Conditions: 150 mM KOAc, 10 mM MgCl2 and 150 mM bicine (pH 8.5), 24 C. The record gives the reactivity of an RNA of 177 nucleotides to DMS and 2A3. As a SHAPE reagent, 2A3 marks flexible, mostly unpaired nucleotides at the ribose 2'-OH. Source: RMDB library OK1LIB, as collected in RNAgym.
RNA sequence: GGGAACGACUCGAGUAGAGUCGAAAAGAUCGCUCGUCCAGGUGGGGUGAGUGACCCCCGAUGGUCUCUCGCGGUGCGAGGGCACCGCAUCGGUACCGGUUUCGGGUUGCCGGUCCUAAGCGGUGUGGCGCGUAUCAUCGUUCGCGAUGGUACGCGCAAAAGAAACAACAACAACAAC
Reactivity to DMS in 0.01 (KOAc 150mM, MgCl2 10mM, bicine 150mM(pH8.5), 24C), signal-to-noise 2, nucleotides 027 to 126: g020a110u000c010g000c000u000c030g000u000c010c010a260g030g020u090g020g000g000g000u000g010a020g010u000g030a030c060c040c000c010c050g010a160u080g000g000u000c010u000c030u000c020g010c010g010g060u040g030c000g020a040g010g000g010c000a000c020c010g030c010a010u020c130g010g020u020a050c000c000g000g000u000u020u030c120g000g010g010u050u020g020c000c000g000g000u020c000c010u010a110a170g010c000g000g000u000g050u040g000
Reactivity to 2A3 in 0.01 (KOAc 150mM, MgCl2 10mM, bicine 150mM(pH8.5), 24C), signal-to-noise 4, nucleotides 027 to 126: g040a140u010c000g010c000u010c010g010u030c000c010a040g040g180u220g040g080g000g000u010g010a030g010u030g010a010c000c000c000c000c010g140a160u160g060g050u050c010u010c000u000c040g010c050g060g150u170g010c010g020a050g010g060g000c000a000c000c000g000c000a040u070c020g000g010u050a040c000c000g020g020u010u060u150c080g010g030g010u070u060g000c000c000g000g000u000c000c000u020a050a010g000c000g000g010u000g010u020g060